Notes:
An RNA of 177 nucleotides, treated with DMS and read out base by base. The data come from the RNA Mapping Database (RMDB), library OK2TRN. The RNA was probed in 150 mM KOAc, 10 mM MgCl2 and 150 mM bicine (pH 8.5) at 24 C. DMS adducts were read by reverse transcription with MarathonRT.

[RMDB]
RNA sequence: GGGAACGACUCGAGUAGAGUCGAAAAUGCAUUAUUAGCCGCUUGGGCGCAGAUACAACAACGGCCUCAACUGGUUUUUGUUGAUGGGCAGGGGAUAGCGCAUCCUCGUCGUUUAGGGGUUGCCAGCCCUCAAGGUGGUUUUCGAACCACCUUGAGGAAAAGAAACAACAACAACAAC
Reactivity to DMS in 0.01 (KOAc 150mM, MgCl2 10mM, bicine 150mM(pH8.5), 24C), signal-to-noise 1, nucleotides 027 to 126: u010g010c060a040u020u010a070u000u010a120g010c020c010g000c140u000u020g010g010g020c060g000c080a100g000a100u020a070c040a030a020c050a030a000c060g020g000c010c000u000c130a120a110c190u000g020g000u000u000u000u000u000g000u000u000g010a010u000g050g010g030c000a070g040g010g000g000a060u010a110g010c140g010c050a160u000c020c010u000c000g020u000c080g020u020u000u020a130g000g000g000g010u010u000g000c020c040a150g010c060